[RMDB]
RNA sequence: GGGAACGACUCGAGUAGAGUCGAAAAUAAGACUUCAGUUCAUACAUGGCUUAAUUCUGAAAGUGUUCAGACCAUAGUACCCUUAUUUGAUUUAAAAGCAUGAAUAUAUGAGAUUUACUAGCAGUAUUAAGUAUUUGAUAGAGCUACGUGAUUUUAAGUAUUAAAUGGAGUUCGCUCCAUUUAAUACAAAAGAAACAACAACAACAAC
Reactivity to DMS in 0.01 (KOAc 150mM, MgCl2 10mM, bicine 150mM(pH8.5), 24C), signal-to-noise 2, nucleotides 027 to 156: u010a070a160g010a120c060u010u000c030a160g030u010u000c030a150u000a050c080a090u010g010g050c020u000u000a030a070u000u020c000u000g010a060a100a110g020u030g050u000u000c050a110g000a140c080c060a060u000a120g010u000a080c030c020c040u010u000a080u000u000u020g010a150u000u010u000a020a030a060a110g010c010a070u000g000a100a090u010a070u000a060u020g020a110g030a070u000u000u000a040c050u000a090g000c010a090g010u010a060u000u000a020a090g030u010a120u000u010u010g000a130u000a070g020a180g030c030u000a070c090g030u000g010a090u000u000u000u000a020a300
Reactivity to 2A3 in 0.01 (KOAc 150mM, MgCl2 10mM, bicine 150mM(pH8.5), 24C), signal-to-noise 3, nucleotides 027 to 156: u060a020a020g020a010c010u080u020c140a040g030u060u100c000a020u040a080c020a020u020g040g030c000u060u070a080a040u140u000c040u080g100a160a150a130g100u070g060u090u070c030a010g050a090c030c020a020u020a050g120u140a060c010c050c000u060u060a100u140u150u090g050a050u030u100u160a040a130a080a000g050c020a010u060g050a170a030u140a000u030a010u120g030a030g000a030u020u110u210a020c030u020a020g030c000a040g030u020a020u070u040a050a010g030u020a130u170u110u050g080a050u080a040g030a010g000c000u050a010c040g030u050g010a020u120u120u200u100a140a000
Structure probing data (DMS and 2A3) for a 207-nucleotide construct. The DMS profile rests on 2,852 reads. Values cover nucleotides 27 to 156.